[RMDB]
RNA sequence: GGGAACGACUCGAGUAGAGUCGAAAAGCAACUUAGGAUUUUAGGCUCCCCGUGCGUGUCUCGAACCAUGCCGGGCCAAACCCACGGGGGCUGGCGGUCCCCGUGCGGUCAACAUCAAACCGCUGGAAAAACAGUUCUAGCUUCGGCUAGAACUGAAGUAUCGGAUCAAGUUCGCUUGAUCCGAUACAAAAGAAACAACAACAACAAC
Reactivity to 2A3 in 0.01 (KOAc 150mM, MgCl2 10mM, bicine 150mM(pH8.5), 24C), signal-to-noise 3, nucleotides 027 to 156: g040c010a010a110c110u150u210a150g070g090a190u150u130u070u220a120g020g010c050u140c010c050c000c010g060u180g010c010g010u010g030u020c070u040c280g070a070a020c040c000a000u040g000c000c000g010g020g000c020c010a090a040a010c010c000c000a010c010g000g000g000g000g000c000u010g000g000c020g000g010u000c020c000c000c000g000u010g020c110g000g010u010c040a060a050c000a120u200c030a160a140a130c000c000g000c020u030g030g030a060a070a030a000a000c010a000g000u000u000c000u010a020g010c000u060u040c200g060g000c000u000a000g000a000a000c000u000g000a000a010
An RNA of 207 nucleotides, treated with 2A3 and read out base by base. For 2A3, 1,400 sequencing reads were counted.